[RMDB]
RNA sequence: GGGAACGACUCGAGUAGAGUCGAAAAGAUAUGGAUGUAACAGGAGCUUGGACCACCUUGUCGGAAACGACAAGGGUGCUAGCUUAGUUACAUCCUAAGUCAAAGACUCAAUCUUCGGAUUGAGUCACGCUAUAGAGACCUUCGGGUCUCUAUAGCGAAAAGAAACAACAACAACAAC
Reactivity to DMS in 0.01 (KOAc 150mM, MgCl2 10mM, bicine 150mM(pH8.5), 24C), signal-to-noise 2, nucleotides 027 to 126: g000a050u010a300u000g010g010a000u010g010u000a010a000c040a160g030g020a010g010c000u000u000g010g000a080c300c050a120c100c000u000u000g020u000c000g000g010a060a050a220c010g000a000c000a010a010g000g010g030u000g000c030u000a020g020c000u010u010a060g000u000u000a000c000a000u000c000c000u000a010a130g010u020c040a120a160a110g010a010c000u000c000a020a000u000c010u000u020c260g030g030a000u010u000g000a030g000u010c000a040
Reactivity to 2A3 in 0.01 (KOAc 150mM, MgCl2 10mM, bicine 150mM(pH8.5), 24C), signal-to-noise 2, nucleotides 027 to 126: g040a020u080a030u160g000g000a020u010g030u000a000a000c000a040g300g000a010g020c000u100u170g040g160a080c040c000a100c030c070u000u010g000u010c000g030g020a060a020a060c010g030a000c000a000a020g010g000g000u000g100c010u010a020g000c010u020u040a020g010u000u000a000c010a000u000c000c000u000a030a010g030u010c040a240a030a090g000a000c010u000c020a000a000u000c000u030u110c300g110g000a000u000u020g000a000g000u000c010a000